[RMDB]
RNA sequence: GGGAACGACUCGAGUAGAGUCGAAAAAACUAUGCGCUUCGUUUUGCAGGUUGAUGUUUGUUAUCAGCACUGAACGAAAAUAAAGCAGUAACCCGCAAUGUGUGCGAAUUAUUGGCAAAAGGCAACCUUGUUCUCAUGAGUUCGCUCAUGAGAACAAAAAAGAAACAACAACAACAAC
Reactivity to DMS in 0.01 (KOAc 150mM, MgCl2 10mM, bicine 150mM(pH8.5), 24C), signal-to-noise 2, nucleotides 027 to 126: a020a030c080u010a080u000g000c010g020c100u000u000c070g000u000u000u000u000g020c100a070g040g010u010u000g010a000u000g000u000u010u020g010u030u020a050u000c010a020g030c040a100c030u000g000a050a030c000g000a030a030a130a110u010a130a050a100g000c010a020g000u010a060a070c030c010c020g000c130a070a050u010g040u000g010u010g000c060g000a080a080u010u020a060u000u040g030g000c050a070a060a050a070g000g010c050a080a070c120c080
Reactivity to 2A3 in 0.01 (KOAc 150mM, MgCl2 10mM, bicine 150mM(pH8.5), 24C), signal-to-noise 3, nucleotides 027 to 126: a000a000c170u150a130u110g000c060g000c000u050u020c010g050u000u000u030u100g080c120a030g080g000u000u000g020a000u020g080u020u210u140g170u050u070a030u080c000a000g040c020a020c150u000g000a050a030c000g110a000a010a000a030u180a050a020a000g010c000a000g040u000a040a110c010c010c010g000c040a050a080u030g040u010g000u000g090c020g090a030a070u130u000a010u050u090g040g020c020a050a050a000a030g050g000c020a000a100c020c000

This 177-nucleotide RNA was probed chemically with DMS and 2A3. Conditions: 150 mM KOAc, 10 mM MgCl2 and 150 mM bicine (pH 8.5), 24 C. It was measured as part of the RMDB libraries RFM100 and RFMREP.